[RMDB]
RNA sequence: GGGAACGACUCGAGUAGAGUCGAAAAAUGGACUGGCGCGUUUAUAUUAUCGCUACUGUUCUGGGCCGAGUUAAUCUGGAUUGCCGUCUAAUCUCGUCAAAGCCCGAUAAUGCGUUAUUUAUCGGGCCUGUCGACUUAGUUUCGACUAAGUCGACAGAAAAGAAACAACAACAACAAC
Reactivity to DMS in 0.01 (KOAc 150mM, MgCl2 10mM, bicine 150mM(pH8.5), 24C), signal-to-noise 3, nucleotides 027 to 126: a070u020g000g000a060c020u000g010g010c050g010c080g000u010u030u020a080u040a080u040u030a040u000c010g030c010u010a070c060u000g000u000u000c040u000g000g000g010c040c030g010a070g010u010u000a090a130u030c050u000g020g000a090u010u020g000c010c050g020u000c050u020a070a120u010c020u000c000g020u040c110a060a070a180g000c000c010c000g000a010u000a000a010u020g000c230g030u020u030a050u020u000u000a000u000c000g000g000g010c010
Reactivity to 2A3 in 0.01 (KOAc 150mM, MgCl2 10mM, bicine 150mM(pH8.5), 24C), signal-to-noise 4, nucleotides 027 to 126: a000u090g000g010a000c010u070g000g010c020g000c000g030u020u120u030a300u010a090u130u150a090u080c020g010c030u050a090c020u080g030u050u020c030u020g010g000g000c020c040g020a000g000u090u140a070a160u090c030u040g010g000a130u110u100g050c000c000g000u000c000u020a010a070u050c010u010c030g140u070c130a200a040a010g020c000c000c000g020a000u000a010a010u050g050c080g070u050u080a030u050u020u000a000u060c000g000g000g000c000